[RMDB]
RNA sequence: GGGAACGACUCGAGUAGAGUCGAAAACACGAUUUCUUCGGAAAUCGUGAAAAGAGCUAGCAAGGUUCCGCUAGCAAAGAUCGAAACAUCAAAGGAACCAAAAAAGUUCGAACUUCGGUUCGAACAAGAAGGAUAAUAUCUUCGGAUAUUAUCCUUCAAAAGAAACAACAACAACAAC
Reactivity to DMS in 0.01 (KOAc 150mM, MgCl2 10mM, bicine 150mM(pH8.5), 24C), signal-to-noise 4, nucleotides 027 to 126: c010a000c010g010a010u000u000u000c000u000u020c180g050g000a010a000a000u000c000g020u000g000a030a060a090a150g000a100g000c000u000a000g010c000a120a090g010g010u000u000c010c000g000c000u000a020g010c000a040a040a060g000a180u000c100g010a100a030a070c230a080u000c140a030a050a120g010g000a020a010c020c010a000a030a060a050a100a060g000u000u000c000g010a010a000c000u000u010c200g030g010u000u000c000g000a000a010c000a040a050
Reactivity to 2A3 in 0.01 (KOAc 150mM, MgCl2 10mM, bicine 150mM(pH8.5), 24C), signal-to-noise 1, nucleotides 027 to 126: c010a000c000g000a000u000u010u010c010u000u020c170g010g000a000a000a000u000c000g000u010g000a010a020a000a010g060a020g000c000u000a000g010c020a180a130g030g000u000u000c000c010g000c000u000a000g000c020a030a050a000g050a030u150c100g080a070a080a040c030a030u120c030a020a000a040g000g000a000a000c000c000a070a070a050a000a010a040g000u000u000c000g020a010a000c010u050u110c300g050g000u010u000c000g000a000a000c000a000a010